[RMDB]
RNA sequence: GGGAACGACUCGAGUAGAGUCGAAAACGGCGGUGCGUGGACGGACAGCUCGAAGCGUCGCGAGGAGUUUUGUUGCCGGUUUGGAUGGGAGAAUCUCGGUGUCGGUUAGCUGGGAGGUCCGUUACGGCGAUAAAAAUACUUUCGAGUAUUUUUAUCGAAAAGAAACAACAACAACAAC
Reactivity to 2A3 in 0.01 (KOAc 150mM, MgCl2 10mM, bicine 150mM(pH8.5), 24C), signal-to-noise 7, nucleotides 027 to 126: c020g010g000c020g010g030u090g010c050g010u040g030g040a030c020g010g010a030c020a020g020c010u020c040g060a110a010g020c010g060u040c030g000c020g020a050g030g030a070g010u010u060u080u110g120u090u140g030c020c030g010g060u040u120u120g090g010a050u050g020g020g020a070g040a070a060u030c010u010c030g030g020u060g040u060c030g000g030u110u140a040g000c020u040g000g000g020a030g000g040u010c030c010g000u010u020a020c020g010g020
Reactivity to DMS in 0.01 (KOAc 150mM, MgCl2 10mM, bicine 150mM(pH8.5), 24C), signal-to-noise 8, nucleotides 027 to 126: c080g010g000c030g000g010u010g010c070g030u010g000g010a080c050g000g000a080c100a090g010c030u010c050g020a130a110g000c040g010u000c040g010c040g000a100g020g010a110g000u000u010u010u010g010u010u010g000c020c010g010g010u010u020u020g010g000a040u000g010g000g010a120g000a100a100u010c030u000c030g010g010u010g000u010c060g000g000u010u010a090g010c040u010g000g000g010a040g010g000u000c020c020g010u010u010a060c060g000g010
Description: Chemical mapping of a 177-nucleotide RNA with 2A3 and DMS. The reactions ran in a buffer of 150 mM KOAc, 10 mM MgCl2 and 150 mM bicine (pH 8.5), at 24 C.